The record gives the reactivity of an RNA of 177 nucleotides to DMS and 2A3. Reactivities are given for positions 27 through 126. The RNA was probed in 150 mM KOAc, 10 mM MgCl2 and 150 mM bicine (pH 8.5) at 24 C.
[RMDB]
RNA sequence: GGGAACGACUCGAGUAGAGUCGAAAACGACGGUAGGUCAGUAUGCCCCGAAACCCCCGGGCUACACGCGCGCUACAAUGGGCGGGACAAUGGGACCCGACCCCGAAAGGGGAAGGGAAUCCCCUAAGUAGGAUUAGCUGUUCGCAGCUAAUCCUACAAAAGAAACAACAACAACAAC
Reactivity to DMS in 0.01 (KOAc 150mM, MgCl2 10mM, bicine 150mM(pH8.5), 24C), signal-to-noise 2, nucleotides 027 to 126: c090g000a060c160g040g000u020a030g000g000u000c010a060g040u000a090u020g000c020c000c000c050g000a000a190a210c030c050c010c020c070g010g000g000c050u060a050c070a080c050g060c010g010c050g040c070u000a030c040a030a000u000g000g000g030c010g010g000g010a110c240a080a090u010g020g020g020a070c060c000c020g010a300c000c020c020c000g000a050a140a190g010g000g010g010a000a300g000g000g000a090a080u000c030c010c000c050u010a010a120
Reactivity to 2A3 in 0.01 (KOAc 150mM, MgCl2 10mM, bicine 150mM(pH8.5), 24C), signal-to-noise 2, nucleotides 027 to 126: c080g080a000c000g030g090u100a020g040g030u050c000a010g020u040a080u120g040c010c000c000c020g010a070a070a060c000c000c010c010c000g010g020g010c010u030a020c040a010c020g060c000g010c010g000c000u080a050c070a070a170u150g050g010g010c000g000g030g020a000c060a110a130u180g000g020g000a000c000c000c000g010a000c000c000c000c000g000a040a040a060g000g010g000g000a000a010g020g010g000a000a080u030c010c000c000c000u060a100a040